[RMDB]
RNA sequence: GGGAACGACUCGAGUAGAGUCGAAAACGAACACCAACCCAGAAAGUCUUCAUGCACAAAGGACAGGAGGUGUCCUCACCACAGGGAUUAAACUCUUCCCCCGUACGGGCCCAACAGAAGGUUGAAGCACUUCCAUUAAAUUCGUUUAAUGGAAGUGAAAAGAAACAACAACAACAAC
Reactivity to DMS in 0.01 (KOAc 150mM, MgCl2 10mM, bicine 150mM(pH8.5), 24C), signal-to-noise 9, nucleotides 027 to 126: c100g010a100a080c090a130c050c040a080a100c050c010c020a090g000a110a110a070g000u000c020u000u010c050a070u010g010c080a050c110a070a090a060g010g010a050c050a050g010g010a100g010g010u000g010u000c020c020u000c060a060c050c050a060c110a080g000g000g000a070u000u010a050a070a090c060u000c040u000u000c010c010c010c030c050g010u000a060c100g000g000g010c020c010c010a050a080c120a080g010a060a050g020g010u010u010g010a110a120g010
Reactivity to 2A3 in 0.01 (KOAc 150mM, MgCl2 10mM, bicine 150mM(pH8.5), 24C), signal-to-noise 5, nucleotides 027 to 126: c010g030a040a010c030a010c030c010a050a050c010c010c020a030g110a070a110a020g020u020c020u050u030c030a060u130g050c050a030c040a110a090a050g030g020a020c010a020g010g080a030g020g050u030g010u010c000c010u030c020a060c050c010a030c030a040g040g010g000a010u070u170a110a200a120c020u060c010u090u070c020c010c000c000c000g010u030a040c010g030g000g010c020c010c010a010a000c010a020g150a120a010g080g020u060u060g010a030a000g030